Source information
This 177-nucleotide RNA was probed chemically with 2A3. The RNA was probed in 150 mM KOAc, 10 mM MgCl2 and 150 mM bicine (pH 8.5) at 24 C. 2A3 adducts were read by reverse transcription with SuperScript II with manganese.
[RMDB]
RNA sequence: GGGAACGACUCGAGUAGAGUCGAAAAUUAGCAGCAAUGCACACCAGGCUGACUGCCUUAGCAGUGUGGCCCUUUAUUGUGGCAUCCUAAGGAGGGAUUCUGGAGUGCCUUUCGCGUGAAGCAUGCCGCAGCGCUCAUCAUUCGUGAUGAGCGCUGCAAAAGAAACAACAACAACAAC
Reactivity to 2A3 in 0.01 (KOAc 150mM, MgCl2 10mM, bicine 150mM(pH8.5), 24C), signal-to-noise 2, nucleotides 027 to 126: u300u210a020g030c010a010g030c010a010a020u040g000c000a000c000a000c040c000a000g050g000c040u060g020a220c020u120g050c010c040u010u000a000g000c120a020g010u130g070u040g300g070c050c000c010u050u180u030a200u180u230g070u170g000g000c000a060u000c010c000u000a010a010g050g010a060g000g000g000a080u150u050c000u000g000g000a030g000u040g010c000c000u080u040u080c100g010c010g020u120g070a050a000g000c040a010u100g000c040c000